[RMDB]
RNA sequence: GGGAACGACUCGAGUAGAGUCGAAAAGAUAUGGACGCUCUCCCCACCGUGUUGACUCCUUUGAUCGGCUAGUAUUCGGAAACGAAUACUAGCCGGGAGGAGCCAACACGAGGAGCGUCCUAAGUCAUCAGUGAAAUCUGUUCGCAGAUUUCACUGAAAAAGAAACAACAACAACAAC
Reactivity to DMS in 0.01 (KOAc 150mM, MgCl2 10mM, bicine 150mM(pH8.5), 24C), signal-to-noise 1, nucleotides 027 to 126: g010a150u020a250u020g030g010a000c000g010c000u000c010u000c150c020c020c150a300c150c000g000u010g040u000u000g000a000c000u000c000c010u000u000u010g000a040u010c000g030g000c010u000a000g000u000a000u000u000c030g000g000a070a100a230c000g030a010a020u000a010c000u000a020g010c010c010g000g030g010a010g050g000a000g030c000c000a010a000c000a000c000g000a070g020g000a020g060c000g000u000c000c000u010a000a050g000u010c180a100
Background: Structure probing data (DMS) for a 177-nucleotide construct. Source: RMDB library TTRINS, as collected in RNAgym.